[RMDB]
RNA sequence: GGGAACGACUCGAGUAGAGUCGAAAAGAUAUGGAGCGUAAGAGCCUUUGAUCCUUGAUAUGGGAUAAAUAUGUCGGAAACGACAUAUGAAGCCCAUAUCAAGGGGAGGCUUAUCGCUCCUAAGUCACUAUGACACCUUGUUCGCAAGGUGUCAUAGAAAAGAAACAACAACAACAAC
Reactivity to 2A3 in 0.01 (KOAc 150mM, MgCl2 10mM, bicine 150mM(pH8.5), 24C), signal-to-noise 1, nucleotides 027 to 126: g020a010u060a030u300g010g000a020g000c050g000u160a300a300g080a030g180c080c000u300u300u080g040a060u070c020c000u000u010g000a000u000a000u020g000g000g000a000u000a010a040a000u000a000u000g010u010c010g010g000a020a130a160c020g000a000c020a010u010a000u020g000a000a030g000c010c000c000a010u000a000u020c000a000a010g010g000g000g000a000g010g000c020u010u000a010u020c030g010c020u010c000c000u010a000a010g010u000c000a020
Reactivity to DMS in 0.01 (KOAc 150mM, MgCl2 10mM, bicine 150mM(pH8.5), 24C), signal-to-noise 2, nucleotides 027 to 126: g010a040u010a300u010g010g010a030g040c010g010u020a170a300g000a000g000c000c000u000u010u000g000a080u000c000c000u000u000g000a010u000a020u000g000g010g010a000u000a230a130a010u000a000u010g000u000c000g010g030a140a090a230c010g010a020c000a010u000a000u000g000a120a240g000c000c000c020a010u000a000u000c000a010a000g000g000g000g000a010g050g010c000u010u000a050u000c010g020c000u010c000c000u000a010a080g020u000c030a290
This 177-nucleotide RNA was probed chemically with 2A3 and DMS. It was measured as part of the RMDB library TTRINS. The 2A3 profile rests on 3,179 reads.